[RMDB]
RNA sequence: GGGAACGACUCGAGUAGAGUCGAAAAGUGUGGGUUUCGACCCACACAUGUAUCCUAAGUCUCCUCGUUUGACGUUGUCAGUCCGUAUCGGAAACGAUACCAGGACUUGGAUUUACCGAGAGGAGAUAUGGACCUUGACAAGAGUUCGCUCUUGUAAUUUAUCGUGUUGUUUCGACAACACGAUAAAAAAAGAAACAACAACAACAAC
Reactivity to DMS in 0.01 (KOAc 150mM, MgCl2 10mM, bicine 150mM(pH8.5), 24C), signal-to-noise 2, nucleotides 027 to 156: g030u000g030u000g010g000g010u000u010u000c300g020a080c000c000c020a010c000a010c000a020u000g000u010a050u000c000c000u000a040a300g010u010c000u010c000c010u000c030g040u000u000u000g030a120c130g000u000u000g010u000c020a030g000u020c010c020g020u000a010u000c000g010g000a140a140a280c000g050a020u000a010c010c030a250g070g010a030c000u000u010g030g010a090u000u000u010a090c020c010g030a110g010a010g000g000a050g000a000u000a030u000g010g010a160c080c020u010u000g030a080c000a000a060g000a040g040u000u010c270g010c040u000c020u010u010g010u020a040a120
Reactivity to 2A3 in 0.01 (KOAc 150mM, MgCl2 10mM, bicine 150mM(pH8.5), 24C), signal-to-noise 3, nucleotides 027 to 156: g020u020g000u000g000g060g020u050u150u210c240g110a080c000c000c010a000c000a000c000a000u020g090u040a080u000c000c000u010a040a030g010u000c000u000c000c020u040c040g090u140u080u300g080a050c060g010u050u050g020u050c010a010g010u000c000c000g000u000a000u000c000g000g070a090a010a040c000g010a000u010a020c100c060a130g000g000a010c000u030u110g050g020a070u160u080u240a040c040c020g050a030g000a010g080g000a000g000a000u000a000u020g010g010a000c010c020u080u140g050a000c010a010a000g010a000g030u110u130c220g060c110u000c000u020u010g020u010a050a070